This 207-nucleotide RNA was probed chemically with 2A3. The RNA was probed in 150 mM KOAc, 10 mM MgCl2 and 150 mM bicine (pH 8.5) at 24 C. Source: RMDB library M2RFPK, as collected in RNAgym.
RNA sequence: GGGAACGACUCGAGUAGAGUCGAAAAGUUGAGAGCGUUUAACUUAAGUCUUUUUUAUGAGCUUAAAAAAACUAUAUACAAGUGGUGGUAGUCCGCCACUCUAAGGGGACGCCUUUAGAAGAAGAGGGAAAGGCACUAAGCUUCGGCUUAGUGCCAACGUCAGUGUAAAGUUCGCUUUACACUGACGAAAAGAAACAACAACAACAAC
Reactivity to 2A3 in 0.01 (KOAc 150mM, MgCl2 10mM, bicine 150mM(pH8.5), 24C), signal-to-noise 1, nucleotides 027 to 156: g050u060u110g000a050g010a050g040c050g080u030u060u110a120a030c030u030u030a030a000g070u120c010u090u250u150u060u010u090a170u290g050a040g060c030u030u050a030a020a000a000a020a000a000c120u130a120u020a010u030a190c050a090a000g000u000g020g000u000g000g040u080a030g120u100c030c000g000c010c000a020c010u020c000u000a010a010g020g010g000g000a000c020g030c010c000u070u060u060a070g020a150a000g040a010a010g020a040g000g040g020a030a020a110g030g010c000a000c000u000a000a000g010c000u090u210c140g000g000c000u000u000a000g000u000g000c010c000a000a000